Source: RMDB library 15KLIB, as collected in RNAgym. An RNA of 170 nucleotides, treated with 2A3 and read out base by base. 2A3 adducts were read by reverse transcription with SuperScript II with manganese. Values cover nucleotides 27 to 129.
RNA sequence: GGGAACGACUCGAGUAGAGUCGAAAACGCGAUAAUUGUUCAUUGGAGAAGUUCAUGUCUACUCCCAAUGCCAUCUUUAUUUCUGAUAGAAAAAUCAAGAAAUACCCUUGUAUGGUAGGUCCUGAUUGAAGGAGCCGGUUCGCCGGCUCCAAAAGAAACAACAACAACAAC
Reactivity to 2A3 in 0.01 (KOAc 150mM, MgCl2 10mM, bicine 150mM(pH8.5), 24C), signal-to-noise 2, nucleotides 027 to 129: c110g050c110g040a140u030a030a000u090u090g000u140u060c020a020u000u040g090g020a040g000a000a000g000u080u060c000a000u120g100u050c010u000a050c010u140c000c040c000a050a020u090g010c000c030a040u070c010u080u090u020a050u000u010u020c000u000g000a020u020a030g300a110a150a030a050a010u030c080a060a040g000a010a010a010u050a090c020c030c060u000u200g180u070a040u020g000g000u000a000g030g020u020c000c040u160g000a120u020u010g090a010a030